[RMDB]
RNA sequence: GGGAACGACUCGAGUAGAGUCGAAAAGAAGGAUAGUUCGCUAUCCUUCAAACCCACCGAAAGGCAAAUGUGUUAGAUGCCCUCUAACACAAAAACCGGGCAAAACAGUACCGUUCGCGGUACUGAAGUUUCUAUCUUACUUCGGUAAGAUAGAAACAAAAGAAACAACAACAACAAC
Reactivity to DMS in 0.01 (KOAc 150mM, MgCl2 10mM, bicine 150mM(pH8.5), 24C), signal-to-noise 3, nucleotides 027 to 126: g000a010a000g020g000a000u000a000g000u000u000c210g050c000u000a000u000c000c010u000u000c000a020a080a150c000c000c010a090c180c100g000a040a100a060g010g000c060a060a100a200u000g010u000g010u020u000a010g010a050u010g000c280c230c100u000c000u010a000a010c000a000c000a010a020a040a170a110c020c010g000g010g020c160a100a110a090a220c010a000g020u000a010c000c010g030u000u020c170g010c010g000g000u000a000c000u010g000a040a020
Reactivity to 2A3 in 0.01 (KOAc 150mM, MgCl2 10mM, bicine 150mM(pH8.5), 24C), signal-to-noise 3, nucleotides 027 to 126: g000a000a010g000g000a000u010a000g020u040u010c070g000c100u010a000u000c010c010u000u000c000a000a000a010c020c000c010a020c010c030g160a150a070a040g030g000c040a060a050a120u040g000u010g000u000u010a010g000a050u260g030c020c050c000u000c000u000a010a000c010a010c000a000a020a020a010a000c040c010g020g050g010c070a060a050a060a070c000a010g000u000a010c010c010g010u040u050c250g000c010g140g000u000a000c000u000g000a020a010